[RMDB]
RNA sequence: GGGAACGACUCGAGUAGAGUCGAAAAGUGCCUCGUCGGCCCGGCAUGCCAACCUGAUCCGAAGUUCAAGGUGGUUUCUCUGGCCUUCCAGAGAGAUGCGCGUCGGAAGAACCGACGAACAAACCUUGUCAAGAAAACAGUUCGCUGUUUUCUUGACAAAAGAAACAACAACAACAAC
Reactivity to 2A3 in 0.01 (KOAc 150mM, MgCl2 10mM, bicine 150mM(pH8.5), 24C), signal-to-noise 4, nucleotides 027 to 126: g040u040g100c010c010u010c000g030u000c000g020g040c000c000c000g010g000c020a010u070g020c010c010a040a050c010c000u020g030a020u070c050c090g280a190a060g090u090u050c060a090a020g020g000u010g040g000u010u060u000c000u000c000u010g020g020c040c040u230u090c000c000a000g010a000g000a000g000a060u090g050c080g010c010g020u010c000g000g000a080a050g030a100a040c000c000g000a000c000g010a020a000c030a020a060a010c000c020u010u010
Reactivity to DMS in 0.01 (KOAc 150mM, MgCl2 10mM, bicine 150mM(pH8.5), 24C), signal-to-noise 1, nucleotides 027 to 126: g000u030g000c060c070u020c000g000u020c030g040g040c160c010c070g000g050c030a010u010g020c000c250a300a060c020c020u000g000a150u000c030c140g020a070a150g020u100u000c110a200a040g000g000u000g000g050u020u000u000c000u010c000u000g000g000c220c200u000u150c000c000a030g020a010g000a000g020a030u030g000c110g030c000g030u000c000g100g020a090a050g030a130a200c000c000g000a000c000g000a070a050c090a050a030a090c100c070u000u000
This 177-nucleotide RNA was probed chemically with 2A3 and DMS. It was measured as part of the RMDB library RFM100. The 2A3 profile rests on 3,258 reads. For DMS, 1,269 sequencing reads were counted. The reactions ran in a buffer of 150 mM KOAc, 10 mM MgCl2 and 150 mM bicine (pH 8.5), at 24 C. Reactivities are given for positions 27 through 126.